RNA sequence: GGGAACGACUCGAGUAGAGUCGAAAAGAAAGAAAGAAAGAAAGGCUGUGAUGAUUGAGAAUGUCAUGCACCACUCUGAUUUUUUGUGCUGAUAAUCAUCUCUAACCCAUAUUUUAUCUGAGCCUAAGCUAUAACCCCAUUUCGAUGGGGUUAUAGCAAAAGAAACAACAACAACAAC
Reactivity to 2A3 in 0.01 (KOAc 150mM, MgCl2 10mM, bicine 150mM(pH8.5), 24C), signal-to-noise 5, nucleotides 027 to 126: g050a000a070a010g120a010a100a010g080a040a050a010g100a060a090a000g030g020c050u060g040u040g060a030u010g010a010u090u110g060a050g060a090a110u170g010u030c000a020u230g010c030a020c030c010a080c050u120c080u120g300a300u080u020u030u090u130u090g010u000g010c000u000g000a010u040a070a000u030c020a040u000c020u000c040u040a060a070c010c010c030a030u100a060u140u070u020u050a080u040c070u030g010a010g000c000c000u020a050a020
Reactivity to DMS in 0.01 (KOAc 150mM, MgCl2 10mM, bicine 150mM(pH8.5), 24C), signal-to-noise 3, nucleotides 027 to 126: g010a080a160a040g000a050a170a100g000a030a040a070g000a100a220a160g000g000c050u000g000u010g000a000u010g000a020u010u000g030a140g010a090a120u020g010u000c000a040u010g010c010a020c020c240a080c240u030c150u010g020a040u000u000u010u010u020u040g010u010g020c000u000g000a030u000a020a020u000c030a010u000c010u010c010u020a050a100c010c040c000a070u020a090u020u000u020u000a100u000c030u000g000a080g010c010c000u000a070a140
The data come from the RNA Mapping Database (RMDB), libraries RFM100 and RFMREP.
This 177-nucleotide RNA was probed chemically with 2A3 and DMS.
Values cover nucleotides 27 to 126.
DMS adducts were read by reverse transcription with MarathonRT.
For 2A3 the reverse transcriptase was SuperScript II with manganese.
The reactions ran in a buffer of 150 mM KOAc, 10 mM MgCl2 and 150 mM bicine (pH 8.5), at 24 C.